Structure probing data (2A3 and DMS) for a 207-nucleotide construct. The DMS profile rests on 2,559 reads. The reactions ran in a buffer of 150 mM KOAc, 10 mM MgCl2 and 150 mM bicine (pH 8.5), at 24 C. It was measured as part of the RMDB library OK3TST.
RNA sequence: GGGAACGACUCGAGUAGAGUCGAAAAUGGAGCACUGCAUCUUCUUACUUAGAAGAAAAAGGCAUUGAGCGUGAGUUUGAAUUUAAAGGAACGAUUGUUUUUAUCACAAACGUUGACAUUGACCGCGAAUUAGACCGUGGUACUAAACUUGCUCCACUGCAUAAGCCUAGUUCGCUAGGCUUAUGCAAAAAGAAACAACAACAACAAC
Reactivity to 2A3 in 0.01 (KOAc 150mM, MgCl2 10mM, bicine 150mM(pH8.5), 24C), signal-to-noise 2, nucleotides 027 to 156: u060g000g000a010g000c000a040c030u050g030c130a090u000c010u000u010c000u000u020a210c060u100u070a020g000a010a000g000a040a120a010a000a000g000g000c020a040u010u110g010a030g000c050g010u070g000a020g010u000u000u090g040a080a110u110u170u240a150a100a080g060g000a060a000c010g040a070u010u040g080u000u040u090u120u150a130u180c070a050c010a040a090a020c020g010u000u000g050a080c050a160u060u110g080a000c010c000g010c000g050a090a130u100u080a100g050a020c040c000g000u010g000g010u020a030c000u080a010a040a000c010u020u010g000c000u050c020c000a000c010
Reactivity to DMS in 0.01 (KOAc 150mM, MgCl2 10mM, bicine 150mM(pH8.5), 24C), signal-to-noise 2, nucleotides 027 to 156: u000g020g010a040g050c000a040c110u000g000c080a260u010c010u010u000c010u000u010a160c220u010u000a060g030a040a030g020a020a080a070a210a090g010g000c020a080u010u000g010a120g030c030g010u010g010a100g010u000u010u000g010a240a140u010u010u000a070a110a120g000g010a110a090c020g020a090u020u000g000u000u000u000u000u000a070u020c040a030c000a000a070a080c040g030u000u000g020a070c060a120u010u010g010a060c030c000g000c060g000a060a130u000u000a170g020a130c140c070g040u000g040g000u000a040c040u000a040a040a110c020u000u000g000c010u020c020c020a000c110